[RMDB]
RNA sequence: GGGAACGACUCGAGUAGAGUCGAAAACUCUGAAGGCAUGAUCACCCCGUCCGAUGCGGAAGUUAGUGCUUCCGUCGAACGCGAAAGUCGGACGGCGGCCAUGAGUCGCAACGCAAAGCCGCGGCAAUAAGCUCGUCGUCGUUCGCGACGACGAGAACGUACUCUCCCUGUUCGCAGGGAGAGUACGAAAAGAAACAACAACAACAAC
Reactivity to 2A3 in 0.01 (KOAc 150mM, MgCl2 10mM, bicine 150mM(pH8.5), 24C), signal-to-noise 2, nucleotides 027 to 156: c020u000c050u090g120a180a010g050g070c010a020u020g000a020u010c060a040c000c000c000c000g010u000c000c000g000a000u020g000c010g010g020a010a010g000u150u270a170g010u170g300c000u000u000c030c000g000u030c010g080a200a050c060g010c040g190a140a040a000g040u010c000g010g010a000c000g000g000c030g020g040c010c010a010u040g020a020g010u000c000g020c020a020a050c080g040c210a170a050a040g060c140c070g000c020g020g020c000a000a070u150a120a030g030c010u000c010g000u000c000g000u000c000g040u050u100c210g030c040g150a000c000g000a000c000g000a000g000a000a000
Chemical mapping of a 207-nucleotide RNA with 2A3. 2A3 is a SHAPE reagent: it acylates the 2'-hydroxyl of flexible nucleotides of all four kinds. The reactions ran in a buffer of 150 mM KOAc, 10 mM MgCl2 and 150 mM bicine (pH 8.5), at 24 C.